[RMDB]
RNA sequence: GGGAACGACUCGAGUAGAGUCGAAAAGCUCCCUGGGUGGUCUAAGUCCUGAGUACAGGACAGUCGUCAGUAGUUCGACGUGAGCAGAAGCCCACCUCGAGAUGCUACGUGGACGAGGGCAUGCCCAUCUGUGAAUUAGCUUCGGCUAAUUCACAGAAAAAGAAACAACAACAACAAC
Reactivity to 2A3 in 0.01 (KOAc 150mM, MgCl2 10mM, bicine 150mM(pH8.5), 24C), signal-to-noise 6, nucleotides 027 to 126: g050c040u030c010c000c010u000g010g000g000u020g000g010u000c020u040a070a100g000u000c000c000u030g030a090g190u120a210c030a020g000g010a000c000a020g030u010c000g010u000c010a010g010u020a010g020u070u030c010g000a010c000g010u010g010a020g000c030a040g090a300a030g030c000c000c000a010c000c000u000c010g070a100g030a180u200g010c010u020a040c110g300u120g060g010a010c010g010a020g000g010g000c040a130u070g000c000c010c000a010
Reactivity to DMS in 0.01 (KOAc 150mM, MgCl2 10mM, bicine 150mM(pH8.5), 24C), signal-to-noise 3, nucleotides 027 to 126: g020c150u000c010c000c000u000g010g010g040u000g010g000u010c000u020a080a160g000u030c000c000u010g000a300g040u060a130c000a000g010g000a010c010a100g030u000c010g000u000c000a080g000u000a000g010u000u010c030g010a010c270g000u000g010a100g020c010a250g040a160a130g010c010c010c010a030c000c040u000c010g010a020g030a080u040g010c000u000a000c020g000u010g000g010a020c000g000a090g010g000g000c000a070u020g010c000c000c020a030